Description: The record gives the reactivity of an RNA of 177 nucleotides to 2A3 and DMS. Reactivities are given for positions 27 through 126. It was measured as part of the RMDB library OK1LIB. The reactions ran in a buffer of 150 mM KOAc, 10 mM MgCl2 and 150 mM bicine (pH 8.5), at 24 C. For 2A3, 2,938 sequencing reads were counted.

[RMDB]
RNA sequence: GGGAACGACUCGAGUAGAGUCGAAAAGCACGUCCGGAAAGUCCCGUGCGAACACUUGAGCUCCGGCUUGUCCGCUCUUGUGGAUUAGGACGUUCUAGCUCCGGCUUGGCCGCUAGUUCGUCCGAAACCAGGUGCUAUGGUUCGCCAUAGCACCUGGAAAAGAAACAACAACAACAAC
Reactivity to 2A3 in 0.01 (KOAc 150mM, MgCl2 10mM, bicine 150mM(pH8.5), 24C), signal-to-noise 4, nucleotides 027 to 126: g020c000a010c020g030u070c060c000g040g080a120a070a040g150u160c000c010c010g000u030g000c010g040a070a000c000a020c050u030u030g010a000g000c040u050c080c050g040g000c040u100u170g040u080c010c000g000c000u010c000u010u040g020u050g000g010a030u030u160a080g000g000a000c000g000u000u000c000u000a020g000c050u030c120c020g130g030c110u160u300g170g020c010c020g000c030u000a010g010u000u010c010g010u000c000c020g000a010a000a000
Reactivity to DMS in 0.01 (KOAc 150mM, MgCl2 10mM, bicine 150mM(pH8.5), 24C), signal-to-noise 2, nucleotides 027 to 126: g000c140a050c020g030u020c080c030g010g010a120a080a210g000u030c030c030c020g030u000g030c070g010a090a060c040a050c000u000u000g000a060g030c110u070c300c040g020g100c110u010u000g000u010c060c070g020c010u030c010u040u000g040u000g000g000a120u010u010a070g030g000a010c000g000u000u000c000u000a040g010c060u070c090c030g000g000c130u060u040g010g000c150c130g000c030u000a000g000u000u000c020g000u000c000c000g000a050a140a130